[RMDB]
RNA sequence: GGGAACGACUCGAGUAGAGUCGAAAAAACAAGGUUUUCCGAUGGUCCUUCUCGCCCACAGGGUUCGAGUCGCACGGAAGCCUGAGCAGACCAAAGGGAGAUGAUUCCUUGGGAUAUGCUAGUGCCCAAGCACUGCUUGAGCGCGACGCCGCCAAACGUGAUGCUUAAAGUUCGCUUUAAGCAUCACAAAAGAAACAACAACAACAAC
Reactivity to DMS in 0.01 (KOAc 150mM, MgCl2 10mM, bicine 150mM(pH8.5), 24C), signal-to-noise 1, nucleotides 027 to 156: a050a030c070a160a010g030g020u050u000u000u000c000c000g000a170u000g000g000u000c020c010u000u020c030u000c030g010c030c000c020a160c080a090g020g010g030u000u020c000g000a070g090u000c080g020c070a100c010g020g040a100a100g040c030c000u040g000a050g030c070a050g020a130c020c030a060a040a130g000g020g000a060g020a230u010g000a240u000u000c030c020u000u000g010g010g010a110u000a020u010g000c050u010a140g000u000g030c000c000c040a020a000g010c030a240c090u010g020c000u000u000g000a030g010c010g000c020g010a090c060g020c000c040g010c040c040a040a070a110c110
Reactivity to 2A3 in 0.01 (KOAc 150mM, MgCl2 10mM, bicine 150mM(pH8.5), 24C), signal-to-noise 3, nucleotides 027 to 156: a000a000c140a090a020g010g010u280u050u100u060c030c070g080a300u070g000g000u120c040c000u020u000c010u040c020g060c000c000c000a300c210a220g040g030g030u200u240c020g020a010g000u040c020g000c050a010c000g010g000a000a020g010c010c000u020g020a030g000c010a000g030a100c010c010a020a050a030g030g040g000a060g010a040u260g020a080u060u000c020c000u040u000g040g000g050a150u110a020u140g010c010u010a030g010u020g020c000c000c000a000a020g010c080a090c300u230g000c000u020u030g010a000g000c010g020c010g060a030c090g070c030c050g060c020c010a100a030a000c030